This 207-nucleotide RNA was probed chemically with DMS and 2A3. Values cover nucleotides 27 to 156. In probing experiments dimethyl sulfate is read out at A N1 and C N3, which are open when not base-paired.
[RMDB]
RNA sequence: GGGAACGACUCGAGUAGAGUCGAAAACUUGCCACUCCAUGCCAUUUCUAGAAAGGGGUCUCUUGAGAAAUGUGUGUUAAAAUAACGGUUAUAUAGUUGGAAAGAAUAUUACUAUUUUGCGAUUAAGGGAUGCCGUAUGGCAGGCAAGGAAGUAUUACGGCUGAUAAUAUUUCGAUAUUAUCAGCCGAAAAGAAACAACAACAACAAC
Reactivity to DMS in 0.01 (KOAc 150mM, MgCl2 10mM, bicine 150mM(pH8.5), 24C), signal-to-noise 1, nucleotides 027 to 156: c010u000u030g010c030c020a080c100u000c060c020a080u000g000c000c010a090u000u000u000c050u030a170g020a100a140a160g020g030g070g030u000c020u010c040u020u000g020a130g030a060a010a090u000g010u000g030u000g020u000u020a060a110a080a200u000a050a110c050g020g020u010u000a070u020a080u010a120g010u000u020g050g020a220a080a100g000a110a100u000a050u000u000a040c020u010a080u000u000u000u000g030c090g030a160u000u000a040a090g010g020g050a050u010g010c000c000g000u020a090u000g020g080c060a140g020g050c020a030a020g000g010a020a110g020u010a100u020u000a180
Reactivity to 2A3 in 0.01 (KOAc 150mM, MgCl2 10mM, bicine 150mM(pH8.5), 24C), signal-to-noise 3, nucleotides 027 to 156: c000u000u000g000c000c000a070c090u050c060c020a040u110g020c000c010a080u040u130u100c040u060a090g160a150a140a120g000g030g000g010u030c000u030c000u030u070g080a090g050a100a200a150u110g060u010g020u000g040u130u260a120a050a050a040u160a070a010c020g010g010u150u010a090u040a020u010a120g080u020u090g050g020a110a130a040g060a090a010u140a020u250u080a000c000u010a050u070u050u050u090g050c050g040a010u070u070a020a000g020g000g010a010u050g160c000c000g030u040a000u060g000g010c040a030g000g040c010a000a010g010g010a040a040g040u120a070u160u160a020